[RMDB]
RNA sequence: GGGAACGACUCGAGUAGAGUCGAAAAGAGACACUGACACAGAGUCUGACUGAGUCUCAGAGAGUCACUCUGUCUGUGUCACAGAGUGUGACACUCAGACUCACAGUCUGAGAGACUGUCACAGACAGCUACUGACGCGGUUCGCCGCGUCAGUAGCAAAAGAAACAACAACAACAAC
Reactivity to 2A3 in 0.01 (KOAc 150mM, MgCl2 10mM, bicine 150mM(pH8.5), 24C), signal-to-noise 1, nucleotides 027 to 126: g080a000g030a010c000a010c030u030g110a020c000a010c030a050g020a000g030u070c090u020g010a040c010u030g080a030g180u090c020u040c190a060g080a000g010a010g080u070c000a010c020u000c000u020g030u000c000u030g030u030g000u020c000a010c050a030g180a020g130u060g040u040g040a000c020a000c020u030c010a000g000a000c000u000c030a030c060a100g010u000c000u030g010a030g000a000g030a050c090u040g010u000c000a000c000a020g030a040c010a030
Reactivity to DMS in 0.01 (KOAc 150mM, MgCl2 10mM, bicine 150mM(pH8.5), 24C), signal-to-noise 1, nucleotides 027 to 126: g010a160g000a040c000a040c060u000g040a150c110a050c080a020g000a060g000u010c060u000g060a170c060u000g000a060g010u000c150u000c100a190g010a100g000a130g020u000c020a130c020u000c000u000g010u010c000u000g020u000g020u010c010a050c090a190g020a100g020u000g010u020g000a020c000a170c000u000c000a000g020a020c000u000c120a090c160a080g000u000c000u000g000a020g010a110g040a150c210u000g000u000c020a020c000a090g000a070c240a080
The record gives the reactivity of an RNA of 177 nucleotides to 2A3 and DMS.
DMS adducts were read by reverse transcription with MarathonRT.
For DMS, 622 sequencing reads were counted.